[RMDB]
RNA sequence: GGGAACGACUCGAGUAGAGUCGAAAAGAUAUGGAUCCCGUGGCGAGCGAGUGUCGGAAACGACAUAAUCGCGAUGAGCCGAGGGAUCCUAAGUCAAAAUCCUAUCAGAGUUCGCUCUGAUAGGAAACCAGUAUUAGGACUUCGGUCCUAAUACUGGAAAAGAAACAACAACAACAAC
Reactivity to DMS in 0.01 (KOAc 150mM, MgCl2 10mM, bicine 150mM(pH8.5), 24C), signal-to-noise 2, nucleotides 027 to 126: g000a010u010a020u020g000g000a010u000c000c000c000g000u020g020g020c030g020a050g020c010g020a030g020u000g000u000c000g010g010a020a010a000c000g010a000c000a000u000a140a150u000c000g010c000g000a160u020g000a300g030c010c000g000a090g000g010g000a010u000c000c000u010a010a040g000u000c000a190a080a140a180u000c010c000u000a010u010c000a010g030a020g030u000u010c300g020c000u000c000u000g000a010u000a000g020g010a010a040a100
Reactivity to 2A3 in 0.01 (KOAc 150mM, MgCl2 10mM, bicine 150mM(pH8.5), 24C), signal-to-noise 2, nucleotides 027 to 126: g010a010u010a000u030g000g000a020u000c000c010c110g070u230g000g000c100g040a090g020c010g000a020g020u000g000u000c000g010g020a010a010a010c010g000a020c020a000u080a080a120u020c020g000c030g020a140u180g000a020g000c030c010g020a210g000g010g000a000u000c000c000u000a000a000g000u000c000a000a020a030a300u000c000c000u000a000u000c000a000g010a010g030u060u150c200g120c110u040c000u010g000a000u000a000g020g000a030a000a030